[RMDB]
RNA sequence: GGGAACGACUCGAGUAGAGUCGAAAAAGAUUACAUGGGAUGAUGAUUCUGAGUUUGUCGGCUUGCAGAUGAGGGUGAGUGCAAGACAGUGUCAUAUUCAGGGGAGACUCUGGUGUAUCAACAUGAACCAAGGGUAGCUGUUCGCAGCUACCCUUGGAAAAGAAACAACAACAACAAC
Reactivity to 2A3 in 0.01 (KOAc 150mM, MgCl2 10mM, bicine 150mM(pH8.5), 24C), signal-to-noise 1, nucleotides 027 to 126: a010g030a040u030u150a020c080a090u120g040g070g000a030u050g020a020u030g020a010u080u170c020u000g050a050g030u000u210u110g050u110c020g080g030c000u010u030g020c010a050g020a220u050g010a060g000g000g040u070g030a110g040u020g000c020a010a010g020a020c030a030g170u060g010u070c060a040u070a060u150u010c020a000g010g030g020g000a000g010a010c020u050c030u110g100g010u040g000u020a030u040c010a000a060c020a130u150g030a020a020
Reactivity to DMS in 0.01 (KOAc 150mM, MgCl2 10mM, bicine 150mM(pH8.5), 24C), signal-to-noise 1, nucleotides 027 to 126: a090g000a130u020u010a040c080a140u000g010g010g030a060u000g010a050u000g000a030u000u000c020u000g000a110g010u010u000u000g030u010c050g010g060c050u000u010g000c040a050g000a060u000g000a080g020g030g050u000g010a100g020u000g000c070a030a080g030a080c090a090g090u000g000u000c070a040u000a100u010u010c050a060g000g000g000g000a110g020a090c050u000c020u000g000g010u000g010u000a070u000c130a050a080c120a060u010g000a050a150
Chemical mapping of a 177-nucleotide RNA with 2A3 and DMS. For 2A3 the reverse transcriptase was SuperScript II with manganese. Reactivities are given for positions 27 through 126. For 2A3, 856 sequencing reads were counted.